[RMDB]
RNA sequence: GGGAACGACUCGAGUAGAGUCGAAAACGUCUUAAAUUAAAUUUCCCUUGCUGAGCUCAUCUCAGCAAACAAUAACAAAUAACAAAUAAGAACAGCAGGGAAGGUUGUUCUUAUUUGUUACAAUUAACAUCUUUAUUUGAUUCGUCAAAUAAAGAUGAAAAGAAACAACAACAACAAC
Reactivity to 2A3 in 0.01 (KOAc 150mM, MgCl2 10mM, bicine 150mM(pH8.5), 24C), signal-to-noise 6, nucleotides 027 to 126: c020g060u040c060u130u200a160a190a180u110u120a080a110a140u050u140u020c000c000c000u000u010g000c000u010g000a010g000c080u090c160a170u110c090u000c010a000g030c000a000a000a000c010a020a030u230a050a030c050a070a140a020u050a020a000c000a000a010a000u010a000a000g000a010a000c000a000g010c010a020g140g110g110a060a040g090g010u010u000g000u010u000c000u000u000a000u000u000u000g000u000u000a000c000a000a030u080u060a040a020
Reactivity to DMS in 0.01 (KOAc 150mM, MgCl2 10mM, bicine 150mM(pH8.5), 24C), signal-to-noise 3, nucleotides 027 to 126: c220g010u010c150u010u020a050a020a080u010u020a060a110a150u020u000u000c000c000c000u000u000g000c020u000g010a010g010c300u030c290a110u010c010u000c000a010g010c000a020a030a090c160a100a060u000a060a100c100a060a090a120u010a000a000c000a000a010a010u000a010a010g000a010a010c000a020g020c010a050g010g010g010a100a120g000g010u000u000g000u000u000c000u000u000a020u000u000u000g000u000u000a010c080a090a070u010u000a060a160